[RMDB]
RNA sequence: GGGAACGACUCGAGUAGAGUCGAAAAUAGCACUCAAAGGGAGGAAUCCACUCGGAGUAGAACAGAGAAAUCACCUCCAGAGGACCCCUUCAGCGAACAGAGGCGCUCGCACGGGAUAGGAGUAAGAAAACACGGAGCUUCGGCUCCGUGAAAAGAAACAACAACAACAAC
Reactivity to DMS in 0.01 (KOAc 150mM, MgCl2 10mM, bicine 150mM(pH8.5), 24C), signal-to-noise 3, nucleotides 027 to 129: u020a030g050c060a160c110u010c090a000a000a000g000g080g000a030g000g030a170a140u000c030c040a170c030u000c170g040g000a000g000u000a060g010a110a180c150a210g000a040g030a120a070a100u020c110a080c270c000u000c000c000a000g000a150g000g000a040c240c070c000c000u000u100c000a090g000c070g020a010a090c020a180g040a150g000g020c130g030c010u060c150g030c140a070c080g000g050g130a060u000a060g000g000a040g070u040a020a140g000a000a060a040a000
Reactivity to 2A3 in 0.01 (KOAc 150mM, MgCl2 10mM, bicine 150mM(pH8.5), 24C), signal-to-noise 2, nucleotides 027 to 129: u050a000g000c040a000c020u010c030a000a050a050g090g000g030a090g000g000a090a010u010c000c020a010c090u000c190g010g010a050g040u190a080g030a050a000c120a060g080a010g010a090a060a110u070c000a000c020c000u000c000c000a010g000a000g030g050a030c000c030c000c050u070u120c080a020g020c000g030a120a000c040a050g100a060g160g000c000g000c010u000c030g040c000a000c020g000g000g000a010u120a080g050g010a010g000u000a060a000g050a000a020a030a000